Structure probing data (DMS and 2A3) for a 177-nucleotide construct. The RNA was probed in 150 mM KOAc, 10 mM MgCl2 and 150 mM bicine (pH 8.5) at 24 C. It was measured as part of the RMDB library TTRDES. Reactivities are given for positions 27 through 126. The 2A3 profile rests on 2,963 reads.
[RMDB]
RNA sequence: GGGAACGACUCGAGUAGAGUCGAAAAGAUAUGGAGUGUUGGAGGGAGAAGAUAGUCGGAAACGACUAUACUUCGACGAUCUCCACCACUCCUAAGUCAAAGGGCGUAAUCUUCGGAUUACGCCCAACAUCACGGUAACCUUCGGGUUACCGUGAUGAAAAGAAACAACAACAACAAC
Reactivity to DMS in 0.01 (KOAc 150mM, MgCl2 10mM, bicine 150mM(pH8.5), 24C), signal-to-noise 2, nucleotides 027 to 126: g040a020u000a300u000g010g000a020g000u000g000u010u010g000g010a060g020g010g020a060g010a070a030g000a030u000a000g000u000c000g000g000a060a050a130c000g020a010c000u000a000u000a090c010u000u000c000g010a100c300g000a080u000c000u000c060c000a000c050c010a000c000u010c010c000u000a010a020g000u000c080a080a130a170g040g000g000c000g020u000a000a000u000c000u000u020c270g020g010a000u020u020a030c010g010c010c030c000a000a020
Reactivity to 2A3 in 0.01 (KOAc 150mM, MgCl2 10mM, bicine 150mM(pH8.5), 24C), signal-to-noise 1, nucleotides 027 to 126: g000a000u070a020u140g000g010a020g020u020g010u000u110g010g010a020g020g160g010a290g020a150a000g000a020u010a010g020u000c020g000g000a070a000a030c000g000a000c000u010a010u000a150c000u000u000c010g050a040c060g040a150u030c010u000c000c080a000c000c010a010c000u000c010c010u000a020a000g000u020c000a060a250a090g000g000g000c090g010u150a010a010u020c030u110u190c300g040g000a010u000u000a010c010g040c040c000c000a000a000